[RMDB]
RNA sequence: GGGAACGACUCGAGUAGAGUCGAAAAGCGCUUUUACAAAUCUAGAUAAGUUGAAGUUCAAAGAGGUCUGUAAAACUACUACUGGUAUACCUGAAUACAACUUUAUCAUCUACGACUCAUCAGAUCGAAACACCACAGUUCGCUGUGGUGAAAAGAAACAACAACAACAAC
Reactivity to DMS in 0.01 (KOAc 150mM, MgCl2 10mM, bicine 150mM(pH8.5), 24C), signal-to-noise 8, nucleotides 027 to 129: g040c030g030c060u020u010u040u050a060c130a050a090a050u000c070u050a030g000a000u000a030a080g020u000u010g010a050a070g040u000u000c060a050a100a050g000a070g050g020u030c110u070g040u010a040a030a070a070c130u040a010c050u030a030c110u070g000g000u000a050u000a060c010c030u020g020a040a030u040a050c120a030a020c000u030u020u050a090u030c070a050u050c070u050a030c010g060a000c070u000c060a060u060c140a070g000a110u000c000g020a050a060a140
Reactivity to 2A3 in 0.01 (KOAc 150mM, MgCl2 10mM, bicine 150mM(pH8.5), 24C), signal-to-noise 9, nucleotides 027 to 129: g020c030g020c060u040u030u040u070a100c090a040a100a040u060c050u090a050g010a040u020a050a030g010u010u020g080a150a040g020u030u040c060a090a110a070g160a020g020g020u010c060u090g150u200a040a060a070a040c050u090a020c010u030a030c040u110g050g010u070a050u040a090c010c000u020g020a030a010u060a020c030a020a000c000u040u070u080a050u060c040a020u020c010u060a030c040g040a020c020u020c030a070u040c010a040g040a110u040c020g030a040a060a000